[RMDB]
RNA sequence: GGGAACGACUCGAGUAGAGUCGAAAAGCCUACCCACUGAAGGAGCCAGUCUGCUUCCACCUAGUCAGCAGCUCCAGGGAGCGCAUCUCCCUCCAGGAAGGGCAGGAGGCCAAGAGGAGCUGGAAAGACGUUAACCUCUUUUCGAAGAGGUUAACGUAAAAGAAACAACAACAACAAC
Reactivity to 2A3 in 0.01 (KOAc 150mM, MgCl2 10mM, bicine 150mM(pH8.5), 24C), signal-to-noise 1, nucleotides 027 to 126: g040c030c020u050a060c030c010c000a090c050u050g020a220a030g030g010a010g000c000c000a030g080u100c040u040g040c010u160u050c030c010a070c000c030u050a040g100u130c030a030g020c000a000g020c040u000c000c020a010g060g040g000a150g040c100g020c050a200u000c000u020c020c030c000u010c020c020a080g050g060a110a070g020g050g000c020a020g060g050a030g000g030c020c000a080a020g000a040g070g000a000g000c000u030g030g050a090a060a000g070
Reactivity to DMS in 0.01 (KOAc 150mM, MgCl2 10mM, bicine 150mM(pH8.5), 24C), signal-to-noise 3, nucleotides 027 to 126: g010c040c040u000a110c020c020c030a280c050u010g000a130a130g010g010a060g000c030c020a010g010u010c050u000g000c040u020u000c020c070a150c160c090u000a080g060u010c090a160g020c040a060g000c000u010c000c020a090g020g000g000a050g030c180g020c240a110u000c020u020c000c010c010u020c050c090a100g000g020a160a090g000g000g000c080a100g010g010a100g000g020c050c020a050a140g010a120g010g000a010g000c000u000g010g020a070a060a140g030
Notes
Chemical mapping of a 177-nucleotide RNA with 2A3 and DMS. For 2A3 the reverse transcriptase was SuperScript II with manganese. Values cover nucleotides 27 to 126. The DMS profile rests on 2,143 reads. The reactions ran in a buffer of 150 mM KOAc, 10 mM MgCl2 and 150 mM bicine (pH 8.5), at 24 C.